[RMDB]
RNA sequence: GGGAACGACUCGAGUAGAGUCGAAAAGAUAUCGUGUGACGGAAAACGCGAUCAAUUAAAGCGGAUAAUUGAAGUGUCACUCGGUAGAAAAAUCUGUGAAAACUGAGCUUUUGCGAAGAACAGAGAAGGGAUAACUAAACUUCGGUUUAGUUAUCCCAAAAGAAACAACAACAACAAC
Reactivity to DMS in 0.01 (KOAc 150mM, MgCl2 10mM, bicine 150mM(pH8.5), 24C), signal-to-noise 2, nucleotides 027 to 126: g030a130u020a000u000c000g000u000g020u020g000a000c000g000g000a110a110a040a080c170g010c010g000a200u050c140a130a070u020u010a020a120a120g050c110g030g010a040u010a040a130u070u020g000a000a160g000u040g000u000c000a010c020u000c000g040g000u030a060g000a040a100a020a120a160u000c000u000g040u020g010a020a070a040a120c060u010g000a300g000c000u000u000u070u090g010c000g000a070a070g000a100a010c000a000g000a020g000a200a140
Reactivity to 2A3 in 0.01 (KOAc 150mM, MgCl2 10mM, bicine 150mM(pH8.5), 24C), signal-to-noise 3, nucleotides 027 to 126: g030a020u020a000u000c000g000u000g000u000g010a000c000g080g080a100a110a060a020c000g080c060g110a070u130c050a020a020u170u140a160a050a020g020c030g030g000a070u070a120a060u240u130g120a150a000g070u070g000u140c000a000c000u010c010g000g000u010a000g120a000a100a000a000a000u030c000u000g040u000g150a040a090a040a040c030u000g000a010g090c000u020u180u300u300g000c090g010a000a010g000a020a010c000a000g000a010g030a150a070